RNA sequence: GGGAACGACUCGAGUAGAGUCGAAAACAAAAUCAUAGAAUGCCUUAGGAUAUAAGUCAUCAAAUCAUGUAUCCAAUAAGAACCCAAAUUCUGGUGACAAUAACAAAUCCAGCCUACCCUAAUGUAACCGGAAAAUAUACUUCGGUAUAUUUUCCGGAAAAGAAACAACAACAACAAC
Reactivity to 2A3 in 0.01 (KOAc 150mM, MgCl2 10mM, bicine 150mM(pH8.5), 24C), signal-to-noise 3, nucleotides 027 to 126: c020a000a110a030a100u160c040a030u110a250g160a180a060u060g010c000c050u030u040a080g040g020a050u040a010u020a150a080g060u000c000a030u010c000a060a070a000u100c000a010u180g040u070a040u020c040c010a040a090u190a150a030g040a050a050c030c010c010a000a060a050u130u030c020u050g000g000u010g010a000c020a030a170u170a150a030c050a050a060a040u030c020c000a000g040c010c010u070a070c020c000c000u070a140a050u130g030u110a020a040
Reactivity to DMS in 0.01 (KOAc 150mM, MgCl2 10mM, bicine 150mM(pH8.5), 24C), signal-to-noise 1, nucleotides 027 to 126: c140a050a000a040a070u020c040a170u000a100g000a020a010u000g000c100c020u000u010a080g000g050a040u000a000u020a070a110g010u020c030a110u000c060a010a040a060u020c060a050u050g010u010a050u010c030c020a110a170u000a130a070g000a070a140c000c040c010a070a130a050u000u010c060u000g000g020u000g010a010c070a120a020u050a110a050c110a010a100a080u010c020c020a060g020c030c070u010a140c000c000c030u000a040a040u000g000u030a090a110
This 177-nucleotide RNA was probed chemically with 2A3 and DMS. 2A3 adducts were read by reverse transcription with SuperScript II with manganese. Conditions: 150 mM KOAc, 10 mM MgCl2 and 150 mM bicine (pH 8.5), 24 C. The data come from the RNA Mapping Database (RMDB), library OK1LIB. Reactivities are given for positions 27 through 126.